[RMDB]
RNA sequence: GGGAACGACUCGAGUAGAGUCGAAAACUCGCUCAAACAUACAGAGAUGUUGUGCGACAUGAAUCUCUCUGCAUUAGAAUGGUCGAAGAAUCAGCGGCUAUUCGAGACCGAAUUAGAAGCCGCAUUAACAGCUUUGGAACACGCCUUGCUGACGUGAACCUGGCUAAUUAUUCGUAAUUAGCCAGGUAAAAGAAACAACAACAACAAC
Reactivity to 2A3 in 0.01 (KOAc 150mM, MgCl2 10mM, bicine 150mM(pH8.5), 24C), signal-to-noise 5, nucleotides 027 to 156: c000u000c010g010c000u060c050a160a100a100c030a020u180a050c040a080g080a000g000a070u010g010u040u010g020u020g020c010g040a020c040a060u240g050a150a130u040c050u020c000u000c030u150g030c070a140u050u100a100g110a210a100u100g010g010u020c030g020a090a020g010a030a070u050c040a040g000c020g000g000c010u010a010u010u010c020g000a000g030a030c030c030g110a120a070u120u050a060g050a200a020g020c000c020g030c020a000u060u100a050a050c020a000g030c020u090u170u240g080g030a070a030c020a000c070g010c000c000u040u050g000c020u020g010a020c020g030u030g020a000
Reactivity to DMS in 0.01 (KOAc 150mM, MgCl2 10mM, bicine 150mM(pH8.5), 24C), signal-to-noise 2, nucleotides 027 to 156: c040u010c050g040c060u010c060a120a070a080c060a120u000a140c010a110g020a080g010a040u000g000u000u000g040u000g020c040g000a100c040a070u000g000a090a080u000c070u000c030u000c020u010g020c030a080u000u010a080g000a100a060u010g000g020u000c000g000a170a100g020a130a080u000c060a110g050c020g010g050c010u000a100u010u000c020g010a240g000a160c040c030g020a050a070u010u000a160g010a110a100g000c010c000g020c030a150u000u010a030a040c010a040g030c020u000u000u010g010g000a100a140c020a030c010g010c010c020u010u000g000c140u010g020a070c030g030u000g000a110
The data come from the RNA Mapping Database (RMDB), library OK3TST.
An RNA of 207 nucleotides, treated with 2A3 and DMS and read out base by base.
Values are in units of 0.01, from 0 to 300, in steps of 10.
The RNA was probed in 150 mM KOAc, 10 mM MgCl2 and 150 mM bicine (pH 8.5) at 24 C.
The DMS profile rests on 4,296 reads.